[RMDB]
RNA sequence: GGGAACGACUCGAGUAGAGUCGAAAAGCAGUCGUUUAGGGCUGAAUGGGUAACGGGGCAGAAGUUGAAUGGCUCAUCUGAGCCAGUUCGUCGGAGGAAUGAACUGUGAGCGUUACGGCAACAUUUGCGGAAGAGGCGGUACUUGGCGGCAUCCUACUCCCCUCCAAGAUUUCGAUCUUGGAGGGGAAAAAGAAACAACAACAACAAC
Reactivity to 2A3 in 0.01 (KOAc 150mM, MgCl2 10mM, bicine 150mM(pH8.5), 24C), signal-to-noise 1, nucleotides 027 to 156: g110c030a010g010u070c060g030u050u090u190a130g010g000g000c030u010g050a020a070u140g020g000g020u050a080a020c020g100g000g000g000c030a010g010a130a000g010u060u120g050a120a130u030g050g010c020u070c040a190u110c250u220g050a000g000c000c000a000g030u030u020c000g040u020c000g010g040a090g010g060a040a020u100g030a010a010c010u000g070u060g080a030g010c080g010u030u070a030c090g070g000c030a000a000c000a070u010u000u190g060c040g000g000a050a000g000a070g000g060c030g010g030u030a070c030u000u030g050g000c050g000g000c030a030u060c000c000u020a070c040
Structure probing data (2A3) for a 207-nucleotide construct. Values cover nucleotides 27 to 156. 2A3 adducts were read by reverse transcription with SuperScript II with manganese. The reactions ran in a buffer of 150 mM KOAc, 10 mM MgCl2 and 150 mM bicine (pH 8.5), at 24 C.